The record gives the reactivity of an RNA of 177 nucleotides to DMS and 2A3. The 2A3 profile rests on 4,410 reads. The data come from the RNA Mapping Database (RMDB), library OK2TRN. Conditions: 150 mM KOAc, 10 mM MgCl2 and 150 mM bicine (pH 8.5), 24 C. For DMS the reverse transcriptase was MarathonRT.
RNA sequence: GGGAACGACUCGAGUAGAGUCGAAAAUCCAGAGGCUCCUCAGGGCCCUGCCAAAGGCUGAUUGUCCUCACGCCGUCAGCGCCAAGCCAGCCUCUCCUCGCCUGCAGACGGUGCCAGCCCCCACCCCAUUGACAUAUUCUUUCGAGAAUAUGUCAAUAAAAGAAACAACAACAACAAC
Reactivity to DMS in 0.01 (KOAc 150mM, MgCl2 10mM, bicine 150mM(pH8.5), 24C), signal-to-noise 7, nucleotides 027 to 126: u010c030c020a140g010a160g000g010c020u000c040c080u010c120a130g010g010g010c030c050c040u000g010c080c070a070a120a130g010g000c030u000g000a100u010u000g010u000c050c050u000c100a130c110g010c030c040g010u000c040a040g010c120g020c050c060a070a100g000c050c060a080g000c020c010u000c030u000c030c030u000c050g010c030c010u000g010c050a060g020a070c090g010g010u000g010c030c020a070g000c010c010c000c010c010a170c020c000c000c040
Reactivity to 2A3 in 0.01 (KOAc 150mM, MgCl2 10mM, bicine 150mM(pH8.5), 24C), signal-to-noise 3, nucleotides 027 to 126: u020c010c010a030g030a080g070g010c010u020c050c040u090c120a070g040g040g060c010c020c030u020g060c010c010a150a140a010g030g040c000u010g020a120u090u090g060u110c020c020u070c030a030c060g020c010c010g040u050c020a030g020c010g040c070c000a040a000g030c010c010a010g020c020c000u010c020u030c000c000u020c020g050c010c000u010g010c030a050g010a090c030g030g040u050g050c020c000a050g000c000c000c000c000c000a060c010c000c000c000
Values are in units of 0.01, from 0 to 300, in steps of 10.
Reactivities are given for positions 27 through 126.
For 2A3 the reverse transcriptase was SuperScript II with manganese.